[RMDB]
RNA sequence: GGGAACGACUCGAGUAGAGUCGAAAAUAAAAUCACUUUCACUGCCUCAUUGUUUUUAUUUAGUGCAACCCAGAAUAGAGAACUAACAACAAUAAAGAGGAGUUUGGUUCAAUUAGAUUUUAGGUUGACCUCAUAAUCAUUUCGAUGAUUAUGAGGUAAAAGAAACAACAACAACAAC
Reactivity to 2A3 in 0.01 (KOAc 150mM, MgCl2 10mM, bicine 150mM(pH8.5), 24C), signal-to-noise 6, nucleotides 027 to 126: u140a000a050a010a040u050c030a030c030u070u140u110c080a050c050u110g080c000c010u040c010a070u060u020g090u030u050u020u040u090a260u040u100u070a060g030u030g050c010a020a080c010c030c030a030g100a060a030u140a090g190a030g020a060a000c020u040a020a020c030a000a030c010a020a070u200a270a240a020g080a030g080g000a040g030u040u070u130g090g010u060u030c010a020a050u080u040a140g040a140u040u050u030u060a020g020g040u000u010g030
Reactivity to DMS in 0.01 (KOAc 150mM, MgCl2 10mM, bicine 150mM(pH8.5), 24C), signal-to-noise 5, nucleotides 027 to 126: u030a050a080a090a050u000c030a070c060u000u010u010c030a050c080u000g000c030c000u000c040a110u010u010g000u010u020u020u040u030a060u000u010u010a060g020u020g000c020a050a040c020c020c040a060g000a040a020u010a090g020a270g000a020a020c030u010a010a030c080a050a190c090a080a080u040a040a090a160g020a080g000g000a230g010u010u010u020g030g010u000u000c020a070a100u030u030a120g000a040u000u000u010u000a090g010g000u010u000g000